[RMDB]
This 207-nucleotide RNA was probed chemically with 2A3. High 2A3 reactivity points to a flexible backbone, as in loops and unpaired stretches. Conditions: 150 mM KOAc, 10 mM MgCl2 and 150 mM bicine (pH 8.5), 24 C. 2A3 adducts were read by reverse transcription with SuperScript II with manganese.
RNA sequence: GGGAACGACUCGAGUAGAGUCGAAAAGGCUAUUCUUGUACAUUAAUUUUUUUCAUAUCAAUUUUGGAAUCAGCUUAACUUGUUCUAAAACUUUUUGUUGGUAUUUUCAAUGAAAUAGAUUGAUUAAUUAAGAGAGAAUGGUGGUCUCCUUAAAAGAGUCAGUUGAAAUAUUCGUAUUUCAACUGACAAAAGAAACAACAACAACAAC
Reactivity to 2A3 in 0.01 (KOAc 150mM, MgCl2 10mM, bicine 150mM(pH8.5), 24C), signal-to-noise 1, nucleotides 027 to 156: g070g010c020u030a020u020u040c000u030u070g040u120a120c060a140u010u090a040a150u000u100u120u030u000u020u120c030a070u070a030u100c050a000a090u000u030u050u090g010g000a020a010u140c030a060g010c000u010u020a000a100c010u030u060g010u030u030c020u050a020a060a160a210c050u100u170u000u030u110g000u050u010g000g040u100a210u110u160u050u110c010a000a000u070g030a160a040a000u060a130g030a000u000u050g010a000u000u030a090a000u000u030a060a000g100a000g000a000g000a010a000u000g040g020u010g000g080u050c040u000c050c000u140u110a090a180a030a000g100a010
Source information:
For 2A3, 721 sequencing reads were counted.